RNA sequence: GGGAACGACUCGAGUAGAGUCGAAAACGCCGACAGGUAAACGACAUCAUUCGUCACCUUGCCAUCGACAACCUUGCGAUACGGGCUUUCGAUGAAGCCAUAUUUGUUGACGCGGGCAAAGGUUGCACCACCGUACUAGGUUCGCCUAGUACGGUGGAAAAGAAACAACAACAACAAC
Reactivity to 2A3 in 0.01 (KOAc 150mM, MgCl2 10mM, bicine 150mM(pH8.5), 24C), signal-to-noise 2, nucleotides 027 to 126: c100g050c050c000g050a090c080a120g000g130u130a010a090a050c000g030a000c030a090u100c030a100u260u240c050g050u090c050a020c040c000u000u000g010c000c000a050u020c010g030a000c000a010a010c020c000u070u230g100c180g060a000u020a080c230g010g000g000c000u040u040u100c170g180a170u300g050a020a000g010c010c020a000u030a050u060u090u210g000u000u020g010a010c030g050c030g060g010g050c030a110a040a040g030g000u020u110g010c030a050
Reactivity to DMS in 0.01 (KOAc 150mM, MgCl2 10mM, bicine 150mM(pH8.5), 24C), signal-to-noise 2, nucleotides 027 to 126: c150g000c030c020g010a060c120a040g040g020u000a030a100a000c050g010a070c200a040u030c160a150u000u020c030g030u000c040a070c020c030u010u000g010c000c040a040u000c010g000a140c000a050a060c020c300u000u010g010c090g000a070u010a010c180g000g020g020c030u010u000u010c210g010a150u020g000a040a060g000c000c010a090u010a020u000u020u010g020u000u000g010a130c080g000c050g000g000g030c050a040a040a140g020g030u000u000g000c130a160

The record gives the reactivity of an RNA of 177 nucleotides to 2A3 and DMS. The RNA was probed in 150 mM KOAc, 10 mM MgCl2 and 150 mM bicine (pH 8.5) at 24 C. The 2A3 profile rests on 1,093 reads. For 2A3 the reverse transcriptase was SuperScript II with manganese. The data come from the RNA Mapping Database (RMDB), library OK2TRN.